[RMDB]
RNA sequence: GGGAACGACUCGAGUAGAGUCGAAAAUGGUAGCCGGUCGGACGACCGAAAUCGGCAGCAGUUCGGUGUCGGGGUCGACGCGAACCAGCCGGGGUUCGGCGUCGCCGGCCGCGGCGAUGUGCUCGGCUAACCUCUUACAUUUCGAUGUAAGAGGUUAAAAAGAAACAACAACAACAAC
Reactivity to 2A3 in 0.01 (KOAc 150mM, MgCl2 10mM, bicine 150mM(pH8.5), 24C), signal-to-noise 8, nucleotides 027 to 126: u160g100g030u050a020g010c010c000g010g020u090c120g140g030a040c020g070a170c020c000g010a010a010a010u070c010g030g000c010a010g070c050a030g030u020u010c020g140g110u090g010u060c010g010g020g080g130u270c030g000a000c000g000c000g010a000a000c010c010a020g000c010c000g020g000g040g010u000u040c010g020g000c010g010u010c010g000c000c000g000g010c000c000g000c010g030g010c030g020a060u080g060u070g060c040u020c020g040g000c030
Reactivity to DMS in 0.01 (KOAc 150mM, MgCl2 10mM, bicine 150mM(pH8.5), 24C), signal-to-noise 6, nucleotides 027 to 126: u020g020g020u010a110g000c000c000g000g000u000c080g030g010a020c020g010a180c000c010g000a010a030a030u010c010g000g020c000a130g010c300a170g010u010u000c000g010g010u040g040u000c010g010g010g020g020u060c020g010a000c000g000c000g010a010a010c010c070a300g000c000c010g000g000g000g010u000u010c000g000g010c000g000u000c020g000c010c010g000g010c010c010g010c030g010g020c040g000a080u010g000u010g000c030u000c020g000g000c140